This 207-nucleotide RNA was probed chemically with DMS and 2A3.
RNA sequence: GGGAACGACUCGAGUAGAGUCGAAAAACGGUGCGGAAGUUCGCGCUUCCGUGAAACGCGCAAAUCGGACGGUGGCUGCAAGUCGCAUCGCAAAACCGCGGCAAGUGGAGUUAGCGAGAGGAGGCUGAAACCAUCCAACACUUCGGUGUUGGAUGAACCAAUAAUGAAGUUUCGACUUCAUUAUUGGAAAAGAAACAACAACAACAAC
Reactivity to DMS in 0.01 (KOAc 150mM, MgCl2 10mM, bicine 150mM(pH8.5), 24C), signal-to-noise 4, nucleotides 027 to 156: a020c030g010g030u000g010c000g010g020a050a080g040u000u000c180g010c300g020c010u000u000c000c030g020u000g010a030a040a070c020g000c050g020c060a080a080a140u010c010g000g010a080c020g010g010u000g010g030c030u000g020c040a060a120g020u010c030g020c030a140u000c030g020c040a060a060a090a100c040c060g010c030g010g000c040a070a100g040u000g010g020a150g020u000u000a100g010c030g000a080g010a120g000g010a050g030g020c070u020g000a090a060a120c090c010a040u020c010c000a020a010c000a010c000u000u010c270g020g030u000g020u000u000g010g000a010u000g000a030a110
Reactivity to 2A3 in 0.01 (KOAc 150mM, MgCl2 10mM, bicine 150mM(pH8.5), 24C), signal-to-noise 8, nucleotides 027 to 156: a000c040g020g020u070g010c010g000g030a030a020g020u100u140c050g030c030g000c080u020u010c000c000g010u020g020a090a070a000c080g030c000g030c060a040a060a080u100c030g020g010a010c020g040g010u020g050g000c050u070g010c070a060a030g030u030c010g000c030a030u040c030g000c050a050a080a020a020c030c030g020c010g050g020c090a120a050g020u050g060g020a070g030u080u080a030g040c020g030a020g010a030g070g010a020g000g020c020u030g020a070a030a010c040c000a000u000c000c000a000a000c000a000c000u040u080c200g100g000u000g000u010u000g000g000a000u000g000a000a020
2A3 adducts were read by reverse transcription with SuperScript II with manganese. For DMS, 10,491 sequencing reads were counted. The data come from the RNA Mapping Database (RMDB), library M2RFPK.